Annotation: This 177-nucleotide RNA was probed chemically with 2A3 and DMS. The 2A3 profile rests on 16,970 reads. It was measured as part of the RMDB library TTRDEL. The RNA was probed in 150 mM KOAc, 10 mM MgCl2 and 150 mM bicine (pH 8.5) at 24 C.
[RMDB]
RNA sequence: GGGAACGACUCGAGUAGAGUCGAAAAGAUAUGGAGCGAACUACAUCCGACGUGUGGCUAUGAAGUCGGAAACGAUGGAGCCACACCAAGGAUGCGCUCCUAAGUCAAAGCGCGCUUCGGCGCGCAACAAUACUUUGUGGUUCGCCACAAAGUAUUGAAAAGAAACAACAACAACAAC
Reactivity to 2A3 in 0.01 (KOAc 150mM, MgCl2 10mM, bicine 150mM(pH8.5), 24C), signal-to-noise 5, nucleotides 027 to 126: g030a020u090a050u190g010g000a010g010c020g020a070a050c060u150a040c300a010u000c000c010g000a050c030g040u010g000u000g000g000c000u050a270u300g040a040a010g010u000c010g030g000a040a020a010c020g000a000u030g000g060a000g000c000c000a010c000a000c010c000a020a000g000g010a000u000g000c000g000c010u020c000c000u030a110a020g010u000c020a060a110a080g010c010g000c010g000c000u060u140c300g140g000c010g000c000g000c010a000a000
Reactivity to DMS in 0.01 (KOAc 150mM, MgCl2 10mM, bicine 150mM(pH8.5), 24C), signal-to-noise 7, nucleotides 027 to 126: g000a050u010a300u010g000g010a010g010c010g000a060a050c100u020a300c010a020u000c000c010g010a300c300g000u000g020u000g010g010c000u000a240u010g000a090a160g000u010c010g000g000a110a060a140c020g010a010u000g000g010a020g010c000c010a010c010a010c000c020a050a250g000g010a010u000g000c020g000c000u000c000c000u000a020a050g000u000c030a070a150a110g010c000g000c000g020c000u000u010c170g020g000c000g000c000g010c000a010a020